[RMDB]
RNA sequence: GGGAACGACUCGAGUAGAGUCGAAAAGAAGAUAAGAGACCAGACACCGUGGGCAGAUGACAAGAAAGUCCGUCGGUGUCGGUAAGGUCGUCAGUCACAGGCGACCGUUUUCUGUGACUAUAAAGAACGCUGCUACGACGUUCGCGUCGUAGCAGCGAAAAGAAACAACAACAACAAC
Reactivity to DMS in 0.01 (KOAc 150mM, MgCl2 10mM, bicine 150mM(pH8.5), 24C), signal-to-noise 1, nucleotides 027 to 126: g000a020a010g000a130u000a100a100g040a250g000a000c000c040a160g000a000c010a000c000c000g170u000g000g000g030c000a000g000a300u000g000a170c300a040a060g000a180a170a170g000u000c000c000g070u000c000g020g000u000g000u000c000g010g000u000a000a020g000g020u000c010g000u000c010a000g000u000c280a170c180a040g000g000c080g000a060c010c000g000u000u000u000u000c000u000g000u000g000a050c060u000a080u000a090a120a240g000a050a140
Structure probing data (DMS) for a 177-nucleotide construct. It was measured as part of the RMDB library OK1LIB. The RNA was probed in 150 mM KOAc, 10 mM MgCl2 and 150 mM bicine (pH 8.5) at 24 C.